Chemical mapping of a 177-nucleotide RNA with 2A3 and DMS.
It was measured as part of the RMDB library M2PK50.
RNA sequence: GGGAACGACUCGAGUAGAGUCGAAAACUCUGCUAAUUCGUUAGCAGAGGUACAGUGGGACGGGUCGGGAGGGGGAUACUCGCGGUCCCAAGAAGAAUCCAGCAAGCACAUUAUUCGUAAUGUGCAAUAACUUGAAUUGAUUCGUCAAUUCAAGUUAAAAAGAAACAACAACAACAAC
Reactivity to 2A3 in 0.01 (KOAc 150mM, MgCl2 10mM, bicine 150mM(pH8.5), 24C), signal-to-noise 6, nucleotides 027 to 126: c000u000c000u000g000c000u010a030a010u070u070c180g060u060u020a000g000c000a000g010a000g000g000u040a060c050a050g050u060g020g010g130a090c100g020g000g160u200c080g030g020g100a250g040g030g000g000g020a010u040a050c010u010c010g020c020g010g020u010c000c010c000a010a000g030a010a000g030a020a040u020c020c010a010g060c070a170a040g000c000a000c000a010u010u020a020u040u060c110g030u030a010a000u010g000u000g000c000a000a010
Reactivity to DMS in 0.01 (KOAc 150mM, MgCl2 10mM, bicine 150mM(pH8.5), 24C), signal-to-noise 6, nucleotides 027 to 126: c000u000c000u000g000c000u000a000a020u000u010c210g010u000u000a000g000c000a010g010a010g010g020u000a030c170a110g020u000g030g000g000a100c110g010g020g010u000c100g010g010g010a120g000g010g020g010g000a040u000a020c040u000c030g010c070g010g010u000c000c000c010a040a070g000a090a090g000a080a050u010c040c040a130g010c200a080a150g010c000a010c000a000u000u000a030u000u010c170g000u000a010a000u000g000u000g000c010a050a030
Conditions: 150 mM KOAc, 10 mM MgCl2 and 150 mM bicine (pH 8.5), 24 C.